[RMDB]
RNA sequence: GGGAACGACUCGAGUAGAGUCGAAAAGCCGGCAUGCGUGCCAUGAAGCCGGCAUUGUUGACCCAGAUGUCGAGCACGCCGUACUGCUGCGCCACGGCAUCGGCCAGCGCGCGCGAGGCGGCCGGAAAAUUAAUCAGGCCUUCGGGCCUGAUUAAUUAAAAGAAACAACAACAACAAC
Reactivity to DMS in 0.01 (KOAc 150mM, MgCl2 10mM, bicine 150mM(pH8.5), 24C), signal-to-noise 1, nucleotides 027 to 126: g020c020c010g000g040c000a140u000g010c030g000u000g020c030c080a080u010g000a130a180g010c100c010g010g000c000a050u000u000g000u000u000g010a170c000c000c000a290g000a060u000g000u000c050g010a120g030c030a080c000g010c000c060g030u000a080c090u010g020c020u000g030c020g020c020c010a150c140g010g010c010a130u030c170g030g000c010c010a180g030c120g030c010g010c040g010c020g000a130g000g000c020g000g000c120c040g000g000a080a040

Annotation:
This 177-nucleotide RNA was probed chemically with DMS. Source: RMDB library OK2TST, as collected in RNAgym. The RNA was probed in 150 mM KOAc, 10 mM MgCl2 and 150 mM bicine (pH 8.5) at 24 C.